An RNA of 177 nucleotides, treated with 2A3 and DMS and read out base by base. The data come from the RNA Mapping Database (RMDB), library M2PK50. DMS adducts were read by reverse transcription with MarathonRT. The 2A3 profile rests on 3,216 reads.

[RMDB]
RNA sequence: GGGAACGACUCGAGUAGAGUCGAAAACGGUCGAAAUUCGUUUCGACCGAAUAUGCUAGCUGAGCACAGCUGCAAUGCUAAGCUGAAACCCAGCUGCAAGCGCGAGUUCGGCGUUCGCGCCGAACAAGUGCCUACAUCUGUUCGCAGAUGUAGGCACAAAAGAAACAACAACAACAAC
Reactivity to 2A3 in 0.01 (KOAc 150mM, MgCl2 10mM, bicine 150mM(pH8.5), 24C), signal-to-noise 2, nucleotides 027 to 126: c010g000g010u010c000g000a010a020a020u130u120c220g040u040u020u000c000g000a000c010c000g000a010a020u120a030u030g020c090u100a010g000c020u010g030a020g030c060a040c020a170g020c050u080g000c060a050a030u140g010c010u090a050a110g000c000u000g010a090a020a020c000c000c000a010g010c000u080g030c060a100a090g030c060g020c030g070a080g040u000u020c000g020g000c000g050u040u030c190g010c000g000c050c000g010a000a000c000a010a000
Reactivity to DMS in 0.01 (KOAc 150mM, MgCl2 10mM, bicine 150mM(pH8.5), 24C), signal-to-noise 2, nucleotides 027 to 126: c010g020g000u000c000g000a000a000a040u000u010c180g040u010u000u000c000g000a000c000c000g010a020a060u000a090u000g000c000u000a020g000c000u000g000a280g000c120a140c060a040g000c060u010g000c060a070a150u020g000c050u000a060a060g040c000u000g000a110a130a140c060c020c000a130g010c030u000g020c100a050a070g010c070g000c130g000a150g000u000u000c030g000g000c010g020u000u010c160g040c000g000c000c020g000a000a000c000a030a060
Reactivities are given for positions 27 through 126. For DMS, 1,429 sequencing reads were counted.